[RMDB]
RNA sequence: GGGAACGACUCGAGUAGAGUCGAAAAACGUACGCGCGUACCAGCGCUAGCGCGCAGGCCGAUGACGUCUGAUCGAGGCCUCGUACGCGCGCGCUAUCUCGAUCCUGCGCUCGAUGCGCGUCAUCAGUCCACUAUGCAGGUUCGCCUGCAUAGUGGAAAAAGAAACAACAACAACAAC
Reactivity to DMS in 0.01 (KOAc 150mM, MgCl2 10mM, bicine 150mM(pH8.5), 24C), signal-to-noise 3, nucleotides 027 to 126: a070c160g020u000a040c060g020c010g010c010g000u010a080c110c150a060g030c060g020c000u000a020g020c120g000c020g030c000a080g010g020c090c030g000a180u010g010a020c080g000u020c180u020g010a090u000c090g000a280g000g000c010c010u000c200g000u000a030c120g030c110g000c000g000c010g010c000u000a070u010c120u000c030g000a050u010c040c020u000g030c030g010c010u010c170g000a050u000g000c050g010c040g000u000c040a090u010c060a160g010
Reactivity to 2A3 in 0.01 (KOAc 150mM, MgCl2 10mM, bicine 150mM(pH8.5), 24C), signal-to-noise 2, nucleotides 027 to 126: a000c050g020u070a010c010g010c000g010c000g000u020a120c080c050a050g000c010g030c070u020a030g020c010g000c000g000c060a020g020g000c000c010g100a140u300g030a050c040g160u140c180u160g110a300u040c020g040a040g000g000c000c000u010c040g020u070a060c010g000c010g000c000g000c000g010c020u040a040u100c110u020c030g050a080u050c000c040u070g050c020g000c000u010c010g030a030u090g010c070g000c020g090u000c000a080u030c010a010g140
This 177-nucleotide RNA was probed chemically with DMS and 2A3. Values cover nucleotides 27 to 126. The 2A3 profile rests on 2,610 reads. In probing experiments dimethyl sulfate is read out at A N1 and C N3, which are open when not base-paired. 2A3 adducts were read by reverse transcription with SuperScript II with manganese. The RNA was probed in 150 mM KOAc, 10 mM MgCl2 and 150 mM bicine (pH 8.5) at 24 C.